Annotation
The data come from the RNA Mapping Database (RMDB), library TTRDEL. Chemical mapping of a 177-nucleotide RNA with DMS and 2A3. For 2A3 the reverse transcriptase was SuperScript II with manganese. DMS adducts were read by reverse transcription with MarathonRT. The RNA was probed in 150 mM KOAc, 10 mM MgCl2 and 150 mM bicine (pH 8.5) at 24 C. Values cover nucleotides 27 to 126. The 2A3 profile rests on 2,380 reads.
RNA sequence: GGGAACGACUCGAGUAGAGUCGAAAAGAUAUGGAGUAUGGGAGUACGUACUUCAGCGUUGAAAUCGGAAACGAUGGAGCUGAGUAUGAAACCAUACUCCUAAGUCAAACAUACCUUCGGGUAUGAAGUAUUCUGACCUGUUCGCAGGUCAGAAUACAAAAGAAACAACAACAACAAC
Reactivity to DMS in 0.01 (KOAc 150mM, MgCl2 10mM, bicine 150mM(pH8.5), 24C), signal-to-noise 2, nucleotides 027 to 126: g000a040u000a300u020g000g000a000g020u020a010u000g000g000g020a060g000u010a090c280g010u010a000c000u000u000c000a010g000c000g000u030u020g000a090a100a020u020c020g010g010a110a080a130c020g010a020u000g010g020a100g010c000u030g050a040g010u000a020u010g000a130a220a210c000c000a020u000a000c000u000c000c000u000a000a070g000u000c040a120a070a300c010a000u010a010c000c000u000u000c260g040g000g030u000a000u000g000a040a120
Reactivity to 2A3 in 0.01 (KOAc 150mM, MgCl2 10mM, bicine 150mM(pH8.5), 24C), signal-to-noise 1, nucleotides 027 to 126: g060a000u090a070u180g000g000a000g000u000a010u000g010g000g010a010g030u000a020c080g020u000a000c040u200u170c020a000g000c020g300u300u050g000a040a030a020u010c010g000g070a040a020a080c010g000a020u030g010g010a010g000c010u010g000a000g020u020a010u070g050a090a030a000c010c010a000u000a000c000u010c000c000u010a010a000g000u000c000a020a020a030c010a010u010a010c020c000u000u070c300g130g000g030u010a000u010g010a070a030